This 207-nucleotide RNA was probed chemically with 2A3 and DMS.
For 2A3 the reverse transcriptase was SuperScript II with manganese.
For 2A3, 3,576 sequencing reads were counted.

RNA sequence: GGGAACGACUCGAGUAGAGUCGAAAAAGAGCCGGAUACGUCCGGCUCAACGGGGGAUACGUGUGGUGCCGUCCGCUCCCCCUAUGGCAUAACAAAUGCACCACACACUAGGCUACGGCCUAGUGAAAAAAGGUGUAUGUGUUCGCACAUACACCAACAUUUUAAACAGGUUCGCCUGUUUAAAAUGAAAAGAAACAACAACAACAAC
Reactivity to 2A3 in 0.01 (KOAc 150mM, MgCl2 10mM, bicine 150mM(pH8.5), 24C), signal-to-noise 3, nucleotides 027 to 156: a000g000a000g000c000c000g000g010a010u040a040c170g100u000c000c000g000g000c000u010c000a010a000c010g000g000g010g000g010a020u030a100c030g030u030g010u000g040g000u010g000c010c000g040u030c040c050g080c080u030c000c000c000c000c010u050a180u160g110g010c090a090u070a230a060c050a100a090a030u120g010c000a000c000c010a000c000a000c000a000c000u000a000g010g000c000u020a010c290g100g000c000c000u000a000g000u010g040a080a010a010a010a000a010g000g010u000g000u000a000u000g030u000g010u000u050c130g040c040a000c000a000u000a000c000a000c000c000a000a000
Reactivity to DMS in 0.01 (KOAc 150mM, MgCl2 10mM, bicine 150mM(pH8.5), 24C), signal-to-noise 1, nucleotides 027 to 156: a140g010a030g080c030c010g020g010a080u000a070c270g030u020c010c000g000g000c000u000c010a000a020c030g000g000g020g050g000a140u010a030c090g020u000g040u030g000g010u000g020c010c040g020u020c070c060g000c110u010c010c020c000c000c000u000a010u000g040g050c110a150u000a100a100c040a050a100a070u000g020c010a020c000c000a020c030a270c010a020c010u000a000g020g020c000u010a110c290g040g020c010c000u000a030g000u010g010a000a050a090a110a100a090g040g040u000g020u010a010u000g010u010g010u020u010c300g000c000a020c020a030u010a000c000a040c010c010a010a020